[RMDB]
RNA sequence: GGGAACGACUCGAGUAGAGUCGAAAAUAGGAUGAGCAACUGGUAUUUGAAUGAAAAACAAUCGUUUAUAGACAUUUUUAAAAACAUGCUGGGAAGAGGUAUUGUGGAGGCCUGGUGUGACACGGGCAUGUCAUCUUCUUCCAGCCUGUGCCUAGCAGGUGCACCAUUUAUUCGUAAAUGGUGCACCAAAAGAAACAACAACAACAAC
Reactivity to 2A3 in 0.01 (KOAc 150mM, MgCl2 10mM, bicine 150mM(pH8.5), 24C), signal-to-noise 1, nucleotides 027 to 156: u120a010g070g000a020u020g020a040g050c010a000a080c020u020g030g000u110a110u130u130u070g140a030a050u120g010a030a070a000a000a000c050a040a090u120c030g050u100u260u160a300u160a080g090a000c000a000u100u070u080u150u210a100a050a000a050a020c000a000u030g000c000u000g170g000g000a020a040g000a020g010g060u080a080u050u200g010u060g090g080a090g000g080c000c020u020g060g040u060g010u080g030a020c020a020c120g000g000g000c020a020u050g050u030c000a000u000c000u030u000c000u030u000c000c000a000g000c000c010u030g020u000g040c000c030u150a030g050c050a020
About this RNA: Chemical mapping of a 207-nucleotide RNA with 2A3. For 2A3, 554 sequencing reads were counted. Reactivities are given for positions 27 through 156. Source: RMDB library OK3TST, as collected in RNAgym. High 2A3 reactivity points to a flexible backbone, as in loops and unpaired stretches. Conditions: 150 mM KOAc, 10 mM MgCl2 and 150 mM bicine (pH 8.5), 24 C.